Annotation
The record gives the reactivity of an RNA of 207 nucleotides to 2A3. For 2A3, 847 sequencing reads were counted.
[RMDB]
RNA sequence: GGGAACGACUCGAGUAGAGUCGAAAACAGCCAUAGAAGGGUUUAAGGUCCCGGACUGCAGUGUGGAUGCUUUAGUGCAGUUUUCUAUAUAUUACCUCGUAUGGUGCUCACAAAUACCACUACCUUCCAAAUGAAGGCUCUAGCUCAGCCUGCACUCCUCAUGCACAGUGUUCGCACUGUGCAUGAGAAAAGAAACAACAACAACAAC
Reactivity to 2A3 in 0.01 (KOAc 150mM, MgCl2 10mM, bicine 150mM(pH8.5), 24C), signal-to-noise 2, nucleotides 027 to 156: c010a000g050c050c010a030u060a160g110a100a090g090g030g010u140u200u260a050a010g110g040u050c040c010c020g010g020a040c040u030g010c000a030g000u040g020u040g220g000a090u120g010c010u130u040u060a010g010u000g000c060a020g000u050u000u080u020c040u000a070u000a010u000a060u050u140a070c000c020u010c010g060u070a040u040g000g080u020g040c020u010c040a100c040a030a110a020u070a070c030c030a030c040u050a070c000c020u080u080c030c050a060a100a070u190g020a050a010g030g010c000u000c020u010a000g000c000u020c060a000g020c010c000u020g000c020a030c070u060c020